[RMDB]
RNA sequence: GGGAACGACUCGAGUAGAGUCGAAAACAGAUACACCUUUGGGUCCUUAUUUGUUUGGACGCUUUGAGGACAGUAUUCAUCUUUUGUUUCAAAGCUGCUCUCCCAUUAUUAGGAUUUGUAAAAAGGUUGCUCACAUACAAUAUGAUCCUUCUAAGGAUAAUUUAGCAGGGUUCGCCCUGCUAAAUUAAAAAGAAACAACAACAACAAC
Reactivity to 2A3 in 0.01 (KOAc 150mM, MgCl2 10mM, bicine 150mM(pH8.5), 24C), signal-to-noise 2, nucleotides 027 to 156: c030a000g040a020u130a040c030a030c010c010u010u000u080g120g030g000u000c010c010u040u020a080u060u070u150g070u020u040u170g040g000a010c010g020c010u000u000u010g010a020g030g040a010c000a000g040u090a120u110u190c060a150u130c080u030u270u160u040g000u000u030u000c000a000a020a000g000c010u020g000c040u010c010u030c030c010c000a020u060u100a020u070u030a060g010g000a000u010u080u160g090u240a030a040a000a000a010g010g000u040u040g030c020u070c070a080c120a220u300a050c010a100a080u300a080u300g060a070u170c000c000u060u170c050u130a070a070g050g020a000
Reactivity to DMS in 0.01 (KOAc 150mM, MgCl2 10mM, bicine 150mM(pH8.5), 24C), signal-to-noise 2, nucleotides 027 to 156: c010a020g000a030u000a090c050a010c010c010u020u010u000g020g020g030u000c010c040u010u000a030u010u010u000g010u010u000u000g010g030a050c010g000c010u000u000u010g000a080g030g010a030c020a090g070u000a200u000u010c170a160u030c120u000u000u010u010g030u000u000u000c010a030a050a040g010c000u020g040c020u000c030u000c000c000c010a170u000u000a090u000u000a030g000g030a030u000u000u030g010u010a030a060a070a120a100g010g030u000u000g000c030u000c110a100c080a130u000a100c080a050a120u000a080u000g030a040u000c010c020u000u000c130u000a110a080g020g010a140

The data come from the RNA Mapping Database (RMDB), library OK3TST. Structure probing data (2A3 and DMS) for a 207-nucleotide construct. Reactivities are given for positions 27 through 156. For DMS, 3,312 sequencing reads were counted.